[RMDB]
RNA sequence: GGGAACGACUCGAGUAGAGUCGAAAAGGAAGAGGGCUUGAGAGUUUAUUGCUUAGAAGCAUUAGAAGUAGAGCACGUAAUAUAAAUGUUAGACCAUACUGACCAAUUCCUGGUUCAUUUUAGAUGCACAACAAUAAACAUUCGUGUUUAUUGUUGUAAAAGAAACAACAACAACAAC
Reactivity to 2A3 in 0.01 (KOAc 150mM, MgCl2 10mM, bicine 150mM(pH8.5), 24C), signal-to-noise 7, nucleotides 027 to 126: g040g000a040a040g030a040g030g020g000c020u060u050g030a050g010a010g080u020u100u080a070u060u050g000c000u050u060a070g040a250a010g060c010a010u030u060a020g040a130a000g020u060a010g000a000g040c020a000c070g030u030a070a080u100a070u050a160a140a020u080g010u040u060a040g030a030c010c010a020u040a090c040u050g030a030c000c020a020a060u050u030c010c010u020g030g030u050u050c040a060u010u070u060u090a150g030a090u120g030c080
Reactivity to DMS in 0.01 (KOAc 150mM, MgCl2 10mM, bicine 150mM(pH8.5), 24C), signal-to-noise 9, nucleotides 027 to 126: g010g010a090a050g000a200g010g000g010c030u000u000g010a150g010a130g010u000u000u000a030u010u000g010c020u000u010a120g010a130a110g010c020a030u000u000a050g000a040a060g010u000a150g010a050g000c030a030c120g000u000a060a070u010a090u010a040a060a060u000g010u010u000a090g000a070c060c040a070u000a070c080u000g010a080c040c060a050a180u000u000c020c020u000g010g010u000u000c050a050u000u010u000u010a100g010a080u010g020c220